This 207-nucleotide RNA was probed chemically with 2A3.
RNA sequence: GGGAACGACUCGAGUAGAGUCGAAAAGAAUCAGGAGUUUUCUCAUGGGUGAAGUGAGGAUACCUCAUGGAGAAGUCUAUGCAAAAGUAAGGUUCUCAGCACAAUACCCGGCUAAUAAUAUUACCUGCUUAGAGAGUGGGGGUAACAGCAGGUGCAAGUGAUGAUGGUGAUUCGUCACCAUCAUCACAAAAGAAACAACAACAACAAC
Reactivity to 2A3 in 0.01 (KOAc 150mM, MgCl2 10mM, bicine 150mM(pH8.5), 24C), signal-to-noise 1, nucleotides 027 to 156: g030a000a010u110c120a050g120g000a090g150u100u030u030u000c030u030c050a030u080g070g020g000u160g140a200a010g060u060g020a010g000g030a030u040a100c030c090u090c060a030u090g030g030a040g000a090a020g060u030c020u160a090u170g050c060a000a240a060a000g080u030a000a070g050g000u040u000c010u010c000a000g040c090a010c000a060a030u060a090c010c000c000g020g020c040u070a110a020u200a290a010u090a170u170u100a000c030c000u000g010c000u100u050a060g010a000g020a030g200u140g010g000g000g050g020u100a100a000c000a110g000c000a000g000g030u010g010c000a070a000
The RNA was probed in 150 mM KOAc, 10 mM MgCl2 and 150 mM bicine (pH 8.5) at 24 C.
It was measured as part of the RMDB library OK3TST.